RNA sequence: GGGAACGACUCGAGUAGAGUCGAAAAAGUUCGCGCUUCCGUGAAACGCGAAAAUCGGACGGUGGCUGCAAGUCGCAUCGCAAAACCGCGGCAAGUGGAGUUAGCGAGUGGAGGCUGGGUUUUGGCUAGAACACACGGUACUUCGGUACCGUGUGAACAACCUUAAGCCUUUCGAGGCUUAAGGUUGAAAAGAAACAACAACAACAAC
Reactivity to DMS in 0.01 (KOAc 150mM, MgCl2 10mM, bicine 150mM(pH8.5), 24C), signal-to-noise 2, nucleotides 027 to 156: a090g030u000u000c020g010c020g010c010u010u010c050c180g010u020g000a030a060a010c010g020c010g000a030a040a050a120u000c090g030g000a110c020g050g020u000g010g010c020u000g020c000a040a150g010u010c010g020c030a100u000c050g020c040a060a020a090a140c060c040g010c000g000g040c090a100a130g000u010g010g020a090g020u000u000a150g020c000g010a110g020u000g000g010a100g030g000c030u000g010g020g020u000u010u010u020g010g000c090u000a070g020a100a170c010a020c000a000c000g020g020u000a000c000u000u000c270g040g040u000a020c000c000g030u000g000u010g000a040a110
Reactivity to 2A3 in 0.01 (KOAc 150mM, MgCl2 10mM, bicine 150mM(pH8.5), 24C), signal-to-noise 2, nucleotides 027 to 156: a000g060u040u030c020g000c010g000c020u110u030c070c060g060u080g100a080a030a040c030g000c020g060a080a020a000a070u160c080g030g030a030c030g050g040u030g010g000c040u050g000c030a050a050g040u110c040g000c010a060u050c030g010c070a080a050a050a030c060c030g010c010g080g000c120a080a030g010u050g030g000a040g080u020u120a030g030c040g040a040g020u020g010g030a040g000g000c000u020g000g000g030u010u030u060u090g020g000c010u050a050g050a190a000c010a000c000a000c000g000g000u010a020c000u040u040c080g020g010u000a000c000c000g000u000g000u000g000a000a000
Annotation:
This 207-nucleotide RNA was probed chemically with DMS and 2A3. DMS adducts were read by reverse transcription with MarathonRT. 2A3 is a SHAPE reagent: it acylates the 2'-hydroxyl of flexible nucleotides of all four kinds. Values cover nucleotides 27 to 156. It was measured as part of the RMDB library M2RFPK. The DMS profile rests on 4,357 reads. Conditions: 150 mM KOAc, 10 mM MgCl2 and 150 mM bicine (pH 8.5), 24 C.